[RMDB]
Structure probing data (2A3 and DMS) for a 177-nucleotide construct.
For DMS the reverse transcriptase was MarathonRT.
High DMS reactivity at an A or C suggests that its Watson-Crick edge is free.
For 2A3, 765 sequencing reads were counted.
For 2A3 the reverse transcriptase was SuperScript II with manganese.
RNA sequence: GGGAACGACUCGAGUAGAGUCGAAAACAGAGGGAGUUUUGUGCAGACCACAAAGGCUGAUGGGCCGCCCUAGAUUGGUGUCCCUCUUGGAAGUGGGCCCAGAUGUGCGGGACAGUCCCCAGGAAGCCUCAGCAGUCUAGUUCGCUAGACUGCUGAGAAAAGAAACAACAACAACAAC
Reactivity to 2A3 in 0.01 (KOAc 150mM, MgCl2 10mM, bicine 150mM(pH8.5), 24C), signal-to-noise 1, nucleotides 027 to 126: c030a000g070a050g090g070g000a030g010u010u030u110u110g050u050g030c050a010g020a110c020c000a010c050a030a040a020g010g040c030u060g030a170u050g020g040g010c020c000g010c000c010c000u110a170g090a170u050u090g030g000u040g030u190c000c000c020u000c000u050u120g110g050a100a090g000u070g020g020g000c010c000c010a000g010a080u120g030u050g030c040g000g020g020a030c050a070g120u130c000c080c040c000a030g000g100a040a000g050c000
Reactivity to DMS in 0.01 (KOAc 150mM, MgCl2 10mM, bicine 150mM(pH8.5), 24C), signal-to-noise 1, nucleotides 027 to 126: c050a090g030a100g030g000g000a150g010u000u000u020u010g000u000g000c000a170g000a130c120c040a050c080a060a070a120g020g020c010u010g000a180u000g010g000g000c060c030g020c000c010c060u010a100g010a160u010u000g000g000u010g000u010c010c000c000u000c020u000u010g000g010a130a040g000u000g000g000g000c020c020c010a000g000a050u010g000u000g010c060g000g000g000a100c060a070g010u010c060c020c010c040a070g010g020a180a040g010c090